[RMDB]
RNA sequence: GGGAACGACUCGAGUAGAGUCGAAAAGAUAUGGAGAGAAAGCUACCCUUAUUUCGCAUCGAUCAUACCGCUGGUCGGAAACGACCAUGUAUGGGAGCGAUUCAGGGUAGCUUUCUCUCCUAAGUCACGAUUACAGAACGUUCGCGUUCUGUAAUCGAAAAGAAACAACAACAACAAC
Reactivity to DMS in 0.01 (KOAc 150mM, MgCl2 10mM, bicine 150mM(pH8.5), 24C), signal-to-noise 1, nucleotides 027 to 126: g000a060u010a300u010g000g010a020g010a000g020a000a010a010g010c000u010a010c010c000c010u000u000a170u000u010u010c010g010c030a300u010c250g010a120u020c020a010u000a010c000c000g030c020u000g050g000u000c020g020g000a070a120a250c020g040a010c000c000a000u020g000u010a010u000g000g000g000a020g000c000g010a050u000u010c300a040g010g030g000u040a000g010c010u000u000u000c000u000c020u000c000c000u000a010a100g010u000c020a300